[RMDB]
RNA sequence: GGGAACGACUCGAGUAGAGUCGAAAAGUGUCGGAUGAAGAUUUAAGGCCGGAGUAGGGAAGGGUCGUCAGGCGUUCGGCAGCGUCUUGAAGACGAUGCUCACGCUGCGCCCAUCCGCACGGGUUGUGGGUCGAACUCGGACGUUCUUGUAGCCCAGGCAGAACUACUCAUUCGUGAGUAGUUCUGCAAAAGAAACAACAACAACAAC
Reactivity to 2A3 in 0.01 (KOAc 150mM, MgCl2 10mM, bicine 150mM(pH8.5), 24C), signal-to-noise 1, nucleotides 027 to 156: g000u000g040u070c020g080g030a040u020g050a060a080g030a020u060u110u260a100a090g100g000c080c080g030g140a170g020u090a100g120g020g020a050a050g100g020g020u120c090g050u090c040a040g020g030c000g070u110u180c170g050g000c010a000g000c000g020u000c020u060u300g240a300a060g000a000c030g000a000u000g000c000u020c060a020c000g030c000u030g000c060g000c010c010c010a010u060c020c010g050c020a020c070g010g020g030u020u120g050u120g110g000g000u020c100g010a000a010c030u020c050g020g010a000c030g010u050u050c030u000u080g080u270a030g010c000c010c000a030g120
Structure probing data (2A3) for a 207-nucleotide construct. It was measured as part of the RMDB library OK3TST. Reactivities are given for positions 27 through 156. 2A3 adducts were read by reverse transcription with SuperScript II with manganese. The reactions ran in a buffer of 150 mM KOAc, 10 mM MgCl2 and 150 mM bicine (pH 8.5), at 24 C.